Notes: Chemical mapping of a 177-nucleotide RNA with DMS and 2A3.

RNA sequence: GGGAACGACUCGAGUAGAGUCGAAAAAAUGUACUUGAGUCAUUGACAUGUGAGAUCAAUAUACCUGCAUGUUAGUCUUAAGUUCUGAUAGAAAUGACAUGCAAUUAUGCUGCCAAACUUGACUAUCCCUCAUUAGAAAAUUCGUUUUCUAAUGAGGAAAAGAAACAACAACAACAAC
Reactivity to DMS in 0.01 (KOAc 150mM, MgCl2 10mM, bicine 150mM(pH8.5), 24C), signal-to-noise 9, nucleotides 027 to 126: a050a050u020g010u010a030c010u000u000g000a010g010u010c070a080u010u000g010a020c010a020u000g010u000g020a070g010a090u010c160a090a090u020a120u020a100c110c020u000g000c000a010u000g000u000u000a030g010u000c020u000u000a030a030g010u010u000c050u000g000a070u010a020g000a090a090a090u010g000a030c020a020u030g020c000a060a120u020u020a080u010g010c020u000g000c020c020a020a090a110c150u010u000g010a160c040u000a050u000c040
Reactivity to 2A3 in 0.01 (KOAc 150mM, MgCl2 10mM, bicine 150mM(pH8.5), 24C), signal-to-noise 9, nucleotides 027 to 126: a000a000u230g010u020a010c000u010u010g000a000g030u050c040a100u040u080g010a010c010a010u030g030u070g170a060g010a070u120c100a180a040u120a030u060a300c020c010u010g000c000a000u000g000u000u010a020g010u010c010u020u030a030a020g000u050u030c040u050g040a050u030a060g060a020a090a050u060g020a020c020a030u170g010c010a020a030u190u070a130u250g020c010u020g010c020c010a080a110a090c070u080u100g050a040c010u030a040u040c000
The data come from the RNA Mapping Database (RMDB), libraries RFM100 and RFMREP.